The data come from the RNA Mapping Database (RMDB), library OK2TST. Chemical mapping of a 177-nucleotide RNA with 2A3 and DMS. As a SHAPE reagent, 2A3 marks flexible, mostly unpaired nucleotides at the ribose 2'-OH. The RNA was probed in 150 mM KOAc, 10 mM MgCl2 and 150 mM bicine (pH 8.5) at 24 C. For DMS, 5,850 sequencing reads were counted.
RNA sequence: GGGAACGACUCGAGUAGAGUCGAAAAUGGUAGAAGGUUGAAGAUGUCGCUGCCUGUUGCGUCCCAGCCACCCUGCAGCUCCUGCCCAACAGCUCUGGGCCGAGGAGGCUGUGCCCUGCGCCUGUGGGCGCACGCAUAAGUUCGCUUAUGCGUGCGCAAAAGAAACAACAACAACAAC
Reactivity to 2A3 in 0.01 (KOAc 150mM, MgCl2 10mM, bicine 150mM(pH8.5), 24C), signal-to-noise 2, nucleotides 027 to 126: u120g010g010u020a060g020a230a030g090g030u060u100g040a110a020g040a130u130g020u120c040g000c030u040g020c020c050u040g070u070u040g030c040g030u010c030c020c020a010g010c000c000a040c020c010c000u050g000c020a010g000c000u040c020c010u030g020c020c020c000a060a070c050a070g030c010u050c060u120g000g040g000c000c020g100a050g010g010a000g040g060c010u040g020u010g000c000c000c000u030g000c030g000c020c000u050g000u120g030g050
Reactivity to DMS in 0.01 (KOAc 150mM, MgCl2 10mM, bicine 150mM(pH8.5), 24C), signal-to-noise 4, nucleotides 027 to 126: u000g010g030u000a070g010a080a070g000g010u000u000g010a100a110g010a080u000g000u010c050g020c030u000g010c040c030u010g010u000u000g020c090g000u000c020c010c020a150g000c050c040a080c040c040c030u000g020c030a030g000c020u000c020c010u000g010c020c000c010a040a130c160a120g010c130u000c070u000g000g000g040c050c250g010a050g010g010a050g030g010c020u010g000u000g000c050c030c020u000g010c070g010c050c020u000g020u000g010g000